[RMDB]
RNA sequence: GGGAACGACUCGAGUAGAGUCGAAAACAUGGUGGCAAGUACGGCGCGAUAUUGCACCACCUGCAAUAGAAGCGUAGACAUCAACUGUAGCGAGAGCUACUCAACUUAUGGACCUUAGAGCAUGCGAAGACGACGGGUCCUGUCGGAAUUCGCUAGACCAUGGCACGUGAUUCGUCACGUGCCAUGGAAAAGAAACAACAACAACAAC
Reactivity to 2A3 in 0.01 (KOAc 150mM, MgCl2 10mM, bicine 150mM(pH8.5), 24C), signal-to-noise 1, nucleotides 027 to 156: c070a000u050g050g000u020g000g010c060a020a100g010u100a110c110g020g000c000g000c000g020a000u000a000u000u000g000c010a010c140c000a020c060c100u040g000c000a000a090u000a000g170a170a000g000c000g000u010a010g100a110c060a080u150c030a020a000c090u000g010u000a000g000c030g010a010g000a000g040c000u000a000c010u000c020a020a050c000u060u100a020u170g020g010a040c000c080u030u110a060g000a000g090c070a040u220g030c030g000a010a000g020a010c040g000a030c000g150g000g040u020c040c000u020g000u000c000g000g080a140a090u070u000c000g010c050u040a010g050a010

Annotation: Structure probing data (2A3) for a 207-nucleotide construct. As a SHAPE reagent, 2A3 marks flexible, mostly unpaired nucleotides at the ribose 2'-OH. The data come from the RNA Mapping Database (RMDB), library OK3TST. The reactions ran in a buffer of 150 mM KOAc, 10 mM MgCl2 and 150 mM bicine (pH 8.5), at 24 C.